[RMDB]
RNA sequence: GGGAACGACUCGAGUAGAGUCGAAAACGUCCUUUCGAGGACGGAUUUGCGAAGGUGGCGGAAUUGGUAGACGCGCUAGCUUCAGGUGUUAGUGUCCUUACGGACGUGGGGGUUCAAGUCCCCCCCCUCGCACCACUAGUCAUCGCUUCGGCGAUAAUUGUAUAAGAUGUUUCGACAUCUUAUACAAAAAAGAAACAACAACAACAAC
Reactivity to 2A3 in 0.01 (KOAc 150mM, MgCl2 10mM, bicine 150mM(pH8.5), 24C), signal-to-noise 7, nucleotides 027 to 156: c000g000u000c010c000u060u070u100c250g130a020g000g010a010c020g020g020a080u110u070u090g000c000g000a020a010g000g000u000g010g000c020g010g050a030a040u150u140g150g030u260a010g000a010c000g000c000g000c010u010a010g000c000u140u160c140a170g130g090u090g030u060u010a010g000u010g000u030c000c010u110u260a090c180g000g000a000c010g000u020g000g000g000g000g000u000u020c010a000a000g010u000c000c000c000c000c000c000c000c000u000c000g000c000a000c000c000a030c010u100a050g130u150c060a020u000c010g000c000u060u020c180g090g000c000g010a000u010a020a060
Reactivity to DMS in 0.01 (KOAc 150mM, MgCl2 10mM, bicine 150mM(pH8.5), 24C), signal-to-noise 4, nucleotides 027 to 156: c000g010u000c000c010u000u000u020c240g020a050g010g010a030c010g000g010a060u000u000u010g020c040g030a050a070g000g030u000g010g000c040g020g000a040a090u010u000g030g020u000a040g000a300c040g020c050g030c030u000a040g010c020u000u010c150a300g010g020u010g010u000u020a030g020u000g000u000c020c020u000u000a210c250g000g020a010c010g010u000g020g000g030g020g000u000u000c070a080a300g020u000c010c010c000c000c000c000c000c010u000c010g000c010a050c080c040a040c060u000a120g020u000c030a080u000c000g000c010u000u000c230g030g030c010g000a020u010a020a070